[RMDB]
RNA sequence: GGGAACGACUCGAGUAGAGUCGAAAAGAAUAACAGAUGAAGGUGACUAUAAGGUAAAACUCCGCAGCCUGAUUCGCUUUCUCGAAUGCGGAGUGGAAGUUAUUAAAAUGCCAAGAGGAAAACUCAAAGGUAUAGGAUAGUUCGCUAUCCUAUACCUAAAAGAAACAACAACAACAAC
Reactivity to 2A3 in 0.01 (KOAc 150mM, MgCl2 10mM, bicine 150mM(pH8.5), 24C), signal-to-noise 5, nucleotides 027 to 126: g060a010a060u180a100a030c040a030g150a110u160g050a090a020g060g030u040g060a010c060u070a060u030a300a070g080g040u080a050a060a010a020c000u010c000c000g000c000a010g040c000c020u080g040a040u080u010c020g000c060u060u080u020c100u050c050g090a120a040u040g000c000g000g000a000g000u000g020g020a070a020g000u030u000a010u020u130a080a190a050a050u130g040c030c010a060a010g020a040g040g080a080a100a060a030c010u000c030a070a130
Reactivity to DMS in 0.01 (KOAc 150mM, MgCl2 10mM, bicine 150mM(pH8.5), 24C), signal-to-noise 2, nucleotides 027 to 126: g010a060a050u010a070a050c060a080g020a070u020g010a070a070g000g010u000g000a090c110u020a120u020a080a070g020g000u010a060a100a130a040c000u000c010c000g050c010a050g030c050c040u010g010a060u010u030c060g000c110u010u020u000c020u010c070g010a050a090u010g000c020g000g010a010g010u000g010g000a090a090g000u010u000a060u010u020a040a060a070a070u020g010c030c020a070a060g010a060g000g010a070a030a060a090c030u000c040a060a160
Structure probing data (2A3 and DMS) for a 177-nucleotide construct. For DMS, 9,568 sequencing reads were counted. High 2A3 reactivity points to a flexible backbone, as in loops and unpaired stretches. Reactivities are given for positions 27 through 126. It was measured as part of the RMDB library OK1LIB. The RNA was probed in 150 mM KOAc, 10 mM MgCl2 and 150 mM bicine (pH 8.5) at 24 C.